[RMDB]
RNA sequence: GGGAACGACUCGAGUAGAGUCGAAAAGGUCUUACGUCACCCAUGAGAACAACGGUAACUCUCAUGGUUGUCACAGAGAUGUGACGACGGUGACCAUCUAAGUUACCGCUUGUUAGAUGGUAAGACAUGAGUGCAUCAUGUUCGCAUGAUGCACUCAAAAAGAAACAACAACAACAAC
Reactivity to 2A3 in 0.01 (KOAc 150mM, MgCl2 10mM, bicine 150mM(pH8.5), 24C), signal-to-noise 1, nucleotides 027 to 126: g010g000u000c000u020u040a010c000g000u000c090a160c070c000c050a040u110g080a070g080a090a000c010a020a000c000g000g000u000a010a010c000u000c000u010c070a020u030g170g000u020u030g000u000c010a020c010a020g030a000g030a040u030g030u000g000a000c020g000a010c050g060g040u020g000a020c070c030a090u050c050u130a040a000g000u000u010a000c010c000g010c130u010u020g050u050u000a060g010a040u080g040g020u020a030a000g010a000c020a010
Reactivity to DMS in 0.01 (KOAc 150mM, MgCl2 10mM, bicine 150mM(pH8.5), 24C), signal-to-noise 2, nucleotides 027 to 126: g020g020u000c010u000u000a000c020g000u010c020a230c040c010c000a110u030g000a130g030a010a040c020a020a020c010g030g000u000a030a010c010u000c140u000c070a000u000g010g010u000u010g000u000c000a000c000a000g000a240g000a130u000g010u020g010a010c000g020a030c110g030g050u000g010a020c140c070a010u010c180u020a060a040g020u000u000a020c010c000g010c200u010u000g000u000u000a110g020a060u000g040g020u000a000a000g000a020c000a150
An RNA of 177 nucleotides, treated with 2A3 and DMS and read out base by base. The reactions ran in a buffer of 150 mM KOAc, 10 mM MgCl2 and 150 mM bicine (pH 8.5), at 24 C. Source: RMDB library OK2TRN, as collected in RNAgym. For DMS the reverse transcriptase was MarathonRT.